[RMDB]
RNA sequence: GGGAACGACUCGAGUAGAGUCGAAAAACGGUGCGGAAGUUCGCGCUUCCGUGAAACGCGAAAAUCGGACGGUGGCUGCAAGUCGCAUCGCAAAAACGCGGCAAGUGGAGUUAGCGAGAGGAGGCUGAAACCAUCCAACACUUCGGUGUUGGAUGAAUCCGAUUCAAACUUUCGAGUUUGAAUCGGAAAAAGAAACAACAACAACAAC
Reactivity to 2A3 in 0.01 (KOAc 150mM, MgCl2 10mM, bicine 150mM(pH8.5), 24C), signal-to-noise 1, nucleotides 027 to 156: a000c030g020g020u040g030c000g000g000a050a060g050u100u170c060g020c050g000c080u010u040c010c000g000u030g000a080a060a010c100g030c030g110a010a050a000a170u080c010g010g030a010c050g030g030u020g010g030c070u070g000c060a120a000g070u010c000g030c000a010u040c040g000c080a080a080a040a000a030c090g000c010g030g030c030a050a100g020u010g000g060a080g030u060u020a000g020c030g050a030g000a010g030g000a010g000g000c020u020g020a120a010a000c040c000a000u000c000c000a000a000c000a000c000u020u080c200g050g000u000g000u000u010g000g000a000u000g000a000a000